[RMDB]
RNA sequence: GGGAACGACUCGAGUAGAGUCGAAAAGCAGAGAAGCGGACAAACGCCUUCCAUGGAUCAGCUGACAUUGCAGUGCGUGCAGGUAAACAAAUUUCGAAGACAGGUCACUGUAGUAGAAUGGCUGGCGUAGUAAAAUCUUUUUCGAAAGAUUUUACUAAAAAGAAACAACAACAACAAC
Reactivity to DMS in 0.01 (KOAc 150mM, MgCl2 10mM, bicine 150mM(pH8.5), 24C), signal-to-noise 9, nucleotides 027 to 126: g000c060a080g020a080g010a080a070g020c040g010g000a100c170a070a130a110c080g000c050c030u010u000c010c030a080u010g000g010a110u010c040a050g000c040u000g000a150c080a040u000u010g010c010a020g010u010g010c070g000u000g010c050a080g010g010u030a040a060a100c210a040a080a130u010u020u010c050g010a130a160g010a090c030a070g000g010u040c040a020c020u000g000u000a030g020u010a050g010a080a060u020g010g010c020u000g000g010c060g010
Reactivity to 2A3 in 0.01 (KOAc 150mM, MgCl2 10mM, bicine 150mM(pH8.5), 24C), signal-to-noise 7, nucleotides 027 to 126: g050c050a010g040a000g020a180a010g030c020g030g020a050c090a060a160a010c040g010c000c020u030u000c030c000a070u100g070g020a130u050c010a010g020c020u040g020a030c010a030u040u070g000c010a000g010u010g030c030g030u050g030c030a030g020g100u190a080a080a040c090a040a130a080u120u180u130c080g060a060a020g070a070c050a020g000g090u180c020a010c040u010g000u010a000g010u010a010g000a130a070u060g010g000c010u010g010g010c010g020
The record gives the reactivity of an RNA of 177 nucleotides to DMS and 2A3. For DMS the reverse transcriptase was MarathonRT. 2A3 adducts were read by reverse transcription with SuperScript II with manganese.